[RMDB]
RNA sequence: GGGAACGACUCGAGUAGAGUCGAAAAUUGGCCAUUGGUUGCGUGGAUUUUGCAACCAAGACGGUCCGUGCCACCAUAACUGGCUAUCGGCUAGAUCUUGGAGGGAAACUCCUCUACUUGCCAGGUCGCCAAAAUUACGGUUCGCCGUAAUUUUGGCAAAAGAAACAACAACAACAAC
Reactivity to 2A3 in 0.01 (KOAc 150mM, MgCl2 10mM, bicine 150mM(pH8.5), 24C), signal-to-noise 4, nucleotides 027 to 126: u040u090g010g000c000c030a020u000u020g000g010u000u010g000c020g010u110g160g240a300u070u050u130u290g040c010a010a000c000c000a000a010g030a020c100g010g000u100c000c000g030u070g020c000c000a080c020c000a160u130a260a070c020u090g000g000c010u050a150u170c080g030g000c020u020a010g010a130u070c040u140u160g040g000a040g000g030g090a110a120a150c030u020c030c000u000c000u000a020c000u050u020g010c010c000a030g040g020u000c050
Reactivity to DMS in 0.01 (KOAc 150mM, MgCl2 10mM, bicine 150mM(pH8.5), 24C), signal-to-noise 2, nucleotides 027 to 126: u000u000g000g000c060c020a210u070u000g000g000u010u000g000c070g030u040g020g000a120u000u090u140u030g030c020a020a030c030c000a000a030g000a140c170g040g010u000c040c020g000u010g050c100c060a130c000c010a050u050a100a070c220u000g050g000c000u000a120u000c210g000g000c120u000a090g000a060u040c000u000u070g040g000a020g090g050g000a090a080a130c110u000c000c000u000c000u000a160c110u000u000g000c010c100a080g060g000u000c100